[RMDB]
RNA sequence: GGGAACGACUCGAGUAGAGUCGAAAAGAUAUGGACUCAUCUCUAGCGUGGACUUUGAUCAUGUAGGAGUACGUGGGUCGGAAACGACCCAUGAAACUACAUGGGAGUCUCGGGUGAGUCCUAAGUCCUCAAUAGUGAUCUUCGGAUCACUAUUGAGAAAAGAAACAACAACAACAAC
Reactivity to DMS in 0.01 (KOAc 150mM, MgCl2 10mM, bicine 150mM(pH8.5), 24C), signal-to-noise 2, nucleotides 027 to 126: g000a120u000a300u010g000g000a000c000u000c000a020u000c010u000c200u010a120g050c230g040u020g010g030a020c030u000u000u030g010a090u020c000a000u000g000u000a000g000g010a100g020u010a050c300g010u000g020g000g020u000c000g010g010a110a050a230c010g000a000c000c000c020a000u000g000a130a130a120c010u010a010c000a000u000g000g000g010a020g010u010c000u000c050g010g000g010u000g000a050g000u000c000c000u010a010a090g000u000c050
Reactivity to 2A3 in 0.01 (KOAc 150mM, MgCl2 10mM, bicine 150mM(pH8.5), 24C), signal-to-noise 2, nucleotides 027 to 126: g020a060u120a090u180g020g000a010c000u010c010a030u030c130u050c170u270a150g110c100g300u300g110g000a010c010u300u160u170g080a080u210c010a000u020g000u000a000g020g100a080g050u040a030c060g000u000g010g000g010u010c000g000g000a040a060a010c000g000a000c000c070c020a010u020g000a000a000a000c000u000a000c000a000u000g000g010g000a020g010u000c010u020c020g010g020g010u000g030a000g000u000c000c000u000a010a020g000u000c000